[RMDB]
RNA sequence: GGGAACGACUCGAGUAGAGUCGAAAAGGGAUAAGGGAGUACUCUUAUCCCCACGUGGUUGGUGACAACCACGAUUAACGGGAGGUGGCCCGCUCCCACCUCCCUGAGUGCUCUCCACGCCUUCGGGCCUGGUUUGCACGCAGGUAACAGAGCUCAACACCACUAAUAGGUUCGCCUAUUAGUGGUGAAAAGAAACAACAACAACAAC
Reactivity to DMS in 0.01 (KOAc 150mM, MgCl2 10mM, bicine 150mM(pH8.5), 24C), signal-to-noise 1, nucleotides 027 to 156: g030g030g070a040u000a000a040g020g000g010a300g050u000a130c020u000c000u010u040a010u010c010c000c030c000a000c030g010u000g020g030u010u000g000g000u000g010a300c010a010a010c010c010a010c010g010a070u000u010a070a130c050g000g010g010a020g030g030u000g010g030c000c020c300g000c030u000c070c010c000a030c030c000u010c010c000c000u000g000a000g000u000g020c000u000c030u020c000c010a040c120g000c000c000u000u030c290g030g030g030c000c030u000g030g010u000u000u000g040c010a020c000g010c020a030g000g000u020a170a110c030a130g010a220g000c010u010c030a020a300
Reactivity to 2A3 in 0.01 (KOAc 150mM, MgCl2 10mM, bicine 150mM(pH8.5), 24C), signal-to-noise 4, nucleotides 027 to 156: g010g000g010a010u030a020a010g040g010g010a120g150u210a300c000u000c000u010u000a010u010c000c000c000c000a060c020g000u000g000g010u000u000g010g040u060g040a020c000a010a000c000c010a000c000g000a040u080u100a130a050c070g000g010g000a010g020g000u010g000g020c030c110c120g010c030u010c000c000c000a000c000c000u010c000c000c000u000g000a010g000u000g000c000u000c000u010c000c000a000c010g000c010c020u050u100c250g050g000g000c010c020u010g000g000u010u020u000g000c000a000c010g000c020a020g040g030u030a100a040c060a100g020a020g010c040u030c070a050a040